Structure probing data (DMS and 2A3) for a 207-nucleotide construct. The RNA was probed in 150 mM KOAc, 10 mM MgCl2 and 150 mM bicine (pH 8.5) at 24 C. For 2A3 the reverse transcriptase was SuperScript II with manganese. Source: RMDB library OK3TST, as collected in RNAgym. As a SHAPE reagent, 2A3 marks flexible, mostly unpaired nucleotides at the ribose 2'-OH. Values are in units of 0.01, from 0 to 300, in steps of 10.
RNA sequence: GGGAACGACUCGAGUAGAGUCGAAAAGGGAGCUUGCGCAGCGCUCAGCGACAGCGGCGAAAGAAAUCAAGGAUCUCAUCGGCAAUUCAGCUCUGGCCGUCGACGAGGGCGUAAGGCUCGUGAGCGAAACCGGAUCGGGCCUGAGAACGAUUGAAGACAACCAUAAUAAUUUCGAUUAUUAUGGUUGAAAAGAAACAACAACAACAAC
Reactivity to DMS in 0.01 (KOAc 150mM, MgCl2 10mM, bicine 150mM(pH8.5), 24C), signal-to-noise 3, nucleotides 027 to 156: g000g000g020a060g040c020u000u000g000c090g040c060a130g000c010g020c050u000c060a100g010c050g030a100c100a100g020c070g000g000c020g010a080a080a120g010a070a080a120u010c050a070a160g010g000a100u000c030u000c030a110u010c050g030g020c030a050a150u010u010c070a140g000c010u010c020u000g010g010c010c020g010u000c020g000a080c040g010a090g010g000g020c060g020u000a080a080g020g020c010u000c020g010u000g000a220g040c060g010a050a060a140c070c040g040g000a100u000c040g040g000g020c020c010u000g010a090g010a070a090c070g000a130u010u010g010a090a060g000a250
Reactivity to 2A3 in 0.01 (KOAc 150mM, MgCl2 10mM, bicine 150mM(pH8.5), 24C), signal-to-noise 4, nucleotides 027 to 156: g020g020g010a050g030c040u120u100g030c060g010c070a070g050c030g030c030u050c070a060g040c030g080a060c040a040g000c020g050g000c030g040a030a070a040g060a010a100a040u170c130a070a030g060g020a050u010c020u020c060a100u070c040g040g000c020a050a060u110u030c030a090g030c030u010c030u070g060g000c030c030g070u110c010g020a040c040g040a030g000g040g000c010g020u050a050a060g010g000c000u000c050g050u030g000a000g040c050g010a060a040a060c050c020g030g010a040u060c020g010g000g000c000c020u060g010a050g000a060a020c080g090a110u050u140g030a030a020g140a050